Conditions: 150 mM KOAc, 10 mM MgCl2 and 150 mM bicine (pH 8.5), 24 C. An RNA of 177 nucleotides, treated with DMS and 2A3 and read out base by base. Reactivities are rounded to 0.1 and cut off at 0 and 3. 2A3 is a SHAPE reagent: it acylates the 2'-hydroxyl of flexible nucleotides of all four kinds. DMS adducts were read by reverse transcription with MarathonRT. The data come from the RNA Mapping Database (RMDB), library TTRINS.
[RMDB]
RNA sequence: GGGAACGACUCGAGUAGAGUCGAAAAGAUAUGGAGACUCAAGCUGAUGACCCUGUCACAGGUUACGCGUAUAUCGGAAACGAUAUACCCCCAACCUGUGACAGGCAAGGCUUGGUCUCCUAAGUCACAUGAGAUAAAGCUUCGGCUUUAUCUCAUGAAAAGAAACAACAACAACAAC
Reactivity to DMS in 0.01 (KOAc 150mM, MgCl2 10mM, bicine 150mM(pH8.5), 24C), signal-to-noise 5, nucleotides 027 to 126: g020a060u000a300u000g000g000a020g010a000c010u010c010a010a010g000c010u010g000a120u030g000a120c300c000c000u000g000u000c000a000c010a000g010g000u000u000a050c300g020c300g010u000a000u000a000u000c000g010g010a180a100a230c010g010a000u000a010u000a010c000c050c080c280c220a040a020c010c000u000g010u000g000a010c000a000g010g010c020a040a030g000g020c000u000u000g000g010u000c010u000c000c000u000a010a040g020u010c020a270
Reactivity to 2A3 in 0.01 (KOAc 150mM, MgCl2 10mM, bicine 150mM(pH8.5), 24C), signal-to-noise 3, nucleotides 027 to 126: g040a020u080a030u250g030g000a020g010a030c060u080c300a010a000g000c020u040g040a300u190g080a230c000c000c040u010g030u030c000a010c000a000g000g070u030u120a060c130g040c040g070u010a000u000a010u020c020g030g080a090a060a050c010g010a000u000a000u000a020c000c000c000c020c010a010a000c010c000u000g000u010g010a000c010a000g000g020c000a010a030g000g000c010u000u000g000g000u000c000u020c000c000u000a010a020g020u020c020a010